[RMDB]
RNA sequence: GGGAACGACUCGAGUAGAGUCGAAAAUCCCUUUUUGCUUCCAAACUCCUCAACUGGGAACCUUCAUAUGUGCAGUAUUUAUAUUGGAUCAUACUGGUGAUUAUAAAAGUUCCUAGGAGGCUAGAAGUCAUUCUAUUCUAUUCGUAGAAUAGAAUGAAAAAGAAACAACAACAACAAC
Reactivity to 2A3 in 0.01 (KOAc 150mM, MgCl2 10mM, bicine 150mM(pH8.5), 24C), signal-to-noise 9, nucleotides 027 to 126: u020c020c010c000u010u040u010u060u060g030c020u030u010c030c040a130a110a100c050u050c010c000u040c020a190a240c050u010g010g010g000a000a000c010c010u050u090c050a030u030a030u110g140u160g060c000a010g010u020a020u020u180u040a230u040a140u170u220g130g030a070u130c020a000u030a010c000u020g100g040u150g120a090u060u100a030u030a070a040a010a010g000u000u000c000c000u000a010g000g020a000g000g000c000u020a020g000a010a000g030
Reactivity to DMS in 0.01 (KOAc 150mM, MgCl2 10mM, bicine 150mM(pH8.5), 24C), signal-to-noise 7, nucleotides 027 to 126: u010c000c000c010u000u000u020u020u010g000c030u000u000c010c110a090a130a210c150u010c000c010u000c050a110a160c070u000g000g010g000a020a010c010c050u010u000c100a020u000a010u010g020u020g020c010a020g010u000a000u000u010u020a110u030a200u070u020g010g010a140u020c210a020u000a010c010u000g020g010u020g010a110u010u010a010u000a030a040a060a080g000u000u000c000c000u000a030g000g000a030g000g000c280u010a060g000a080a070g010